[RMDB]
The record gives the reactivity of an RNA of 177 nucleotides to 2A3 and DMS. Conditions: 150 mM KOAc, 10 mM MgCl2 and 150 mM bicine (pH 8.5), 24 C. Values cover nucleotides 27 to 126. For 2A3, 15,333 sequencing reads were counted. Source: RMDB library OK2TST, as collected in RNAgym. For DMS the reverse transcriptase was MarathonRT.
RNA sequence: GGGAACGACUCGAGUAGAGUCGAAAAAUAAGCAACGGGCGUACCAUGAAGAUUGCCGCUGGUCGUGGUUUCCAGCGUAUGGAAAUCCGUAUGCGCAUCGAGCCAGAGCACGAAUUGCUUGCGCCCACAGUAAAAUAAAUUUCGAUUUAUUUUACUGAAAAGAAACAACAACAACAAC
Reactivity to 2A3 in 0.01 (KOAc 150mM, MgCl2 10mM, bicine 150mM(pH8.5), 24C), signal-to-noise 8, nucleotides 027 to 126: a000u130a030a020g040c020a030a040c070g020g010g010c020g040u050a040c040c040a060u080g030a030a050g060a060u060u210g080c110c070g040c080u040g060g100u120c020g060u140g050g020u010u050u030c020c010a030g020c080g170u190a090u020g010g000a020a060a050u030c000c000g030u080a050u090g030c050g000c020a020u050c020g030a020g090c030c020a020g000a010g070c010a010c050g060a100a120u060u050g010c020u010u030g010c020g030c020c010c000a010
Reactivity to DMS in 0.01 (KOAc 150mM, MgCl2 10mM, bicine 150mM(pH8.5), 24C), signal-to-noise 9, nucleotides 027 to 126: a070u010a050a050g010c050a040a060c140g010g010g020c010g020u010a060c300c060a110u010g010a170a150g000a040u000u000g030c070c090g030c010u000g010g010u000c030g030u010g020g000u000u000u000c020c010a040g010c300g010u010a040u000g000g000a030a040a020u000c000c010g020u000a080u000g010c030g020c040a030u000c020g000a140g020c140c070a080g010a190g010c010a040c050g000a110a120u000u000g010c020u000u000g010c130g010c000c000c010a120